An RNA of 207 nucleotides, treated with 2A3 and read out base by base. Values are in units of 0.01, from 0 to 300, in steps of 10. The data come from the RNA Mapping Database (RMDB), library RNAMAK.
RNA sequence: GGGAACGACUCGAGUAGAGUCGAAAAGGGGUCUAGUGUGUAGUAGCGAAGACAGCCAGGCUAGCUCUGAAGCCUCCACGGAGCUUGGACCCUGGUCGAGCUACGCAGAUACACUAGACGGAGGCACCCAAAACCCUCAGACUUCGGUCUGAGGGAACACUAUUCUGCACUUCGGUGCAGAAUAGUGAAAAGAAACAACAACAACAAC
Reactivity to 2A3 in 0.01 (KOAc 150mM, MgCl2 10mM, bicine 150mM(pH8.5), 24C), signal-to-noise 2, nucleotides 027 to 156: g190g020g060g000u000c000u000a000g000u010g000u000g000u040a160g010u000a010g010c030g060a100a030g070a140c120a020g100c090c000a000g040g000c010u000a000g000c000u000c000u000g030a070a030g000c010c000u000c000c000a020c000g000g000a000g020c010u060u110g080g050a190c050c010c030u020g040g060u110c050g010a030g000c020u010a000c030g040c020a000g020a080u080a030c000a010c000u000a010g000a000c020g000g000a000g000g020c000a040c010c000c000a050a080a090a150c000c000c010u030c000a000g000a020c010u030u120c250g080g000u000c010u020g000a020g010g010g000a000a000